RNA sequence: GGGAACGACUCGAGUAGAGUCGAAAAGAUAUGGAACAAAGGGAGCAGUGUCUGCCGAAGAACAGGUUUCUAUCGGAAACGAUAGAAACCUGGGAGGCAGACCUGCGAAGAACUUUGUUCCUAAGUCGAAUAAGAGCUUGUUCGCAAGCUCUUAUUCAAAAGAAACAACAACAACAAC
Reactivity to DMS in 0.01 (KOAc 150mM, MgCl2 10mM, bicine 150mM(pH8.5), 24C), signal-to-noise 1, nucleotides 027 to 126: g010a080u000a300u000g010g020a010a000c000a010a010a000g030g000g010a170g030c000a000g000u080g010u000c020u010g020c020c000g010a210a130g000a150a220c000a010g000g020u000u010u010c020u040a020u000c010g000g010a110a110a300c020g000a010u000a000g000a020a000a000c020c000u000g010g020g010a090g010g010c000a010g010a010c000c000u000g050c000g000a050a140g000a170a120c000u000u010u010g000u000u010c000c000u010a040a140g010u000c140